Notes
An RNA of 177 nucleotides, treated with 2A3 and DMS and read out base by base. The reactions ran in a buffer of 150 mM KOAc, 10 mM MgCl2 and 150 mM bicine (pH 8.5), at 24 C. Values cover nucleotides 27 to 126. For 2A3 the reverse transcriptase was SuperScript II with manganese. The DMS profile rests on 12,745 reads.
RNA sequence: GGGAACGACUCGAGUAGAGUCGAAAAAACUGCUACCACCUGAGGAUCGAAUCAUAUUGGUGGACAGGAGCUUUGACGGGACGCUGGGCUUGUCGUUGCUAUGGGUGUUGCGGGGCUGGCGGCGGCCACGAGAGAUGGUAUUCGUACCAUCUCUCGUAAAAGAAACAACAACAACAAC
Reactivity to 2A3 in 0.01 (KOAc 150mM, MgCl2 10mM, bicine 150mM(pH8.5), 24C), signal-to-noise 6, nucleotides 027 to 126: a010a000c060u080g030c070u150a130c000c000a000c010c020u040g040a060g140g020a090u140c100g110a180a070u080c050a040u100a120u230u180g010g000u010g010g010a000c010a000g030g000a020g030c030u080u080u150g050a030c020g000g040g020a010c010g020c080u090g010g040g000c000u020u070g050u080c030g040u050u050g020c030u040a110u120g040g030g020u070g040u080u060g010c030g010g010g000g000c010u030g010g020c000g010g000c000g000g000c020c010
Reactivity to DMS in 0.01 (KOAc 150mM, MgCl2 10mM, bicine 150mM(pH8.5), 24C), signal-to-noise 5, nucleotides 027 to 126: a040a050c010u010g010c050u000a100c020c020a020c010c000u010g010a100g020g000a060u020c180g030a100a300u010c060a070u020a090u040u010g000g020u000g000g000a080c060a040g000g010a070g000c070u010u010u030g000a070c080g010g000g010a080c100g010c040u010g000g010g000c060u000u000g020u000c030g000u010u010g010c060u010a050u010g010g000g020u010g020u010u010g000c050g000g000g000g000c040u010g000g000c060g000g010c060g000g000c070c090